[RMDB]
RNA sequence: GGGAACGACUCGAGUAGAGUCGAAAAUGAAAGAGAGAGAGAGAAAAAGGGAUGGGAUGGGAUGGGAUAAAAACUCUCAAAAACAUCCCAAACAUCCCAAACAUCCCAAGGGUGACAUCCCAAAAAACACAAUGAUCAGAUUCGUCUGAUCAUUGUGAAAAGAAACAACAACAACAAC
Reactivity to DMS in 0.01 (KOAc 150mM, MgCl2 10mM, bicine 150mM(pH8.5), 24C), signal-to-noise 1, nucleotides 027 to 126: u000g010a160a030a140g020a060g000a030g040a090g030a150g000a060g040a030a030a070a160a070g010g000g010a030u000g000g010g040a090u000g010g030g000a050u000g000g010g000a180u010a020a030a050a020a070c120u010c080u020c120a080a080a040a120a070c190a010u010c000c000c000a010a100a070c020a050u000c010c000c000a000a100a090c070a040u000c000c000c020a140a090g000g000g000u040g020a070c130a060u000c000c040c000a030a030a030a020a080a080
Structure probing data (DMS) for a 177-nucleotide construct.
For DMS, 719 sequencing reads were counted.
It was measured as part of the RMDB library M2PK90.